Conditions: 150 mM KOAc, 10 mM MgCl2 and 150 mM bicine (pH 8.5), 24 C. An RNA of 177 nucleotides, treated with DMS and 2A3 and read out base by base. The 2A3 profile rests on 5,501 reads. The DMS profile rests on 5,454 reads.
RNA sequence: GGGAACGACUCGAGUAGAGUCGAAAAAUAAACGUGGCUCAAGCUCUGCGACUGCGCGAUCACAUUCAGGGCAUGAGUGUUUUGCAGAAAAAACACGAUCUGGGUGUUCGCCAUUCAUCCACGAUAAUACCUACCAUGAUUUCGAUCAUGGUAGGUAAAAAGAAACAACAACAACAAC
Reactivity to DMS in 0.01 (KOAc 150mM, MgCl2 10mM, bicine 150mM(pH8.5), 24C), signal-to-noise 5, nucleotides 027 to 126: a070u020a070a060a150c040g030u000g000g020c180u020c110a080a160g020c060u010c060u000g020c120g000a050c170u000g010c180g020c020g010a040u020c150a030c020a030u000u010c010a020g010g010g010c140a120u010g000a140g010u000g010u000u000u000u000g000c180a140g020a010a050a020a010a000a000c000a010c010g010a070u010c010u000g000g010g010u000g010u000u000c020g000c000c020a030u000u010c050a090u000c010c010a020c070g010a100u010a090a120
Reactivity to 2A3 in 0.01 (KOAc 150mM, MgCl2 10mM, bicine 150mM(pH8.5), 24C), signal-to-noise 4, nucleotides 027 to 126: a010u130a020a090a000c020g010u010g030g000c030u040c210a060a030g010c020u040c090u200g030c050g050a030c030u040g020c030g000c010g130a040u070c030a010c000a010u090u030c000a000g060g010g000c160a150u140g100a080g110u010g040u000u010u010u040g120c160a130g280a090a190a000a000a000a000c010a000c000g020a040u030c010u000g000g000g010u020g010u010u020c010g010c000c010a000u020u030c000a020u000c000c000a000c040g010a010u090a100a040